[RMDB]
RNA sequence: GGGAACGACUCGAGUAGAGUCGAAAAUAGCGGCAGCGUCGGGCGUGUUUGCCGUUGAGCGUAGGAUGGCCCGCCUUGCGACACUUCGGACAGUCUAACUCUAAUUCGCCUUUGCUCUCGUCGGCGCUGUGCUGAUAUGCCUCCAGCAGCGGGGAGAUCCAUUAUGAAAAUUCGUUUUCAUAAUGGAAAAAGAAACAACAACAACAAC
Reactivity to DMS in 0.01 (KOAc 150mM, MgCl2 10mM, bicine 150mM(pH8.5), 24C), signal-to-noise 2, nucleotides 027 to 156: u000a090g010c010g030g020c010a020g040c020g020u000c020g040g020g040c030g050u000g010u000u000u010g040c010c010g010u000u000g010a090g000c070g050u000a100g000g020a080u010g030g030c030c020c030g030c050c050u000u000g010c040g000a110c060a090c060u000u010c020g050g030a100c050a100g010u010c060u000a070a080c040u010c030u000a080a160u010u000c010g000c020c030u000u010u010g020c060u000c020u000c020g030u000c010g000g020c000g010c020u010g000u000g070c000u020g000a120u000a080u000g000c030c000u000c030c020a110g020c050a110g010c060g020g000g020g000a120g010a200
Reactivity to 2A3 in 0.01 (KOAc 150mM, MgCl2 10mM, bicine 150mM(pH8.5), 24C), signal-to-noise 4, nucleotides 027 to 156: u120a000g030c040g050g000c020a010g000c010g000u020c050g030g030g040c030g010u080g040u050u110u140g020c020c010g000u010u060g020a030g010c040g020u030a030g030g060a060u090g060g020c010c000c000g010c000c000u050u060g020c010g060a040c020a020c060u070u090c050g020g040a050c030a070g010u020c040u080a070a090c040u010c030u090a040a120u150u060c010g030c010c000u060u060u130g030c030u010c010u020c020g100u010c010g050g000c000g000c010u020g030u040g000c020u010g010a000u030a050u220g020c000c010u020c040c000a050g020c010a000g000c060g040g000g000g000a020g010a010
Description
Conditions: 150 mM KOAc, 10 mM MgCl2 and 150 mM bicine (pH 8.5), 24 C. Structure probing data (DMS and 2A3) for a 207-nucleotide construct. Values cover nucleotides 27 to 156. For DMS, 6,573 sequencing reads were counted. High 2A3 reactivity points to a flexible backbone, as in loops and unpaired stretches. It was measured as part of the RMDB library OK3TST. DMS adducts were read by reverse transcription with MarathonRT.